[RMDB]
RNA sequence: GGGAACGACUCGAGUAGAGUCGAAAAGCUUCUGGACACCUUAGGCUCAGAAGAUUGCUACUUGCGAUGCAAGCGGUGAGUUUUUUGAGGUUUUUUGUAAAUUCCACUUCGGUGGAGUGUAUCAGGACAUGAUAUUGAUCUUCGGAUCAAUAUCAUGAAAAGAAACAACAACAACAAC
Reactivity to DMS in 0.01 (KOAc 150mM, MgCl2 10mM, bicine 150mM(pH8.5), 24C), signal-to-noise 4, nucleotides 027 to 126: g020c130u000u010c010u010g010g000a030c020a030c030c040u000u000a040g010g010c010u000c010a020g000a010a020g010a020u000u000g000c010u000a060c010u000u000g010c000g020a210u010g000c010a010a000g010c020g020g010u000g000a030g010u000u000u000u000u000u000g010a020g010g000u000u000u020u000u000u000g000u000a050a070a130u010u000c000c000a010c000u000u010c180g020g010u000g000g000a020g030u000g010u000a070u000c020a020g000g000a150
Reactivity to 2A3 in 0.01 (KOAc 150mM, MgCl2 10mM, bicine 150mM(pH8.5), 24C), signal-to-noise 4, nucleotides 027 to 126: g010c020u050u010c010u030g020g010a000c000a020c010c010u050u090a030g040g000c000u000c010a000g000a020a010g020a010u000u060g020c000u000a040c020u010u020g020c030g280a180u300g020c010a020a000g010c000g030g020u080g130a060g010u000u020u030u000u030u020g040a040g070g010u060u030u020u030u080u070g060u030a060a080a050u090u000c000c000a010c000u020u040c180g050g000u000g000g010a010g000u020g010u010a160u140c010a010g000g020a010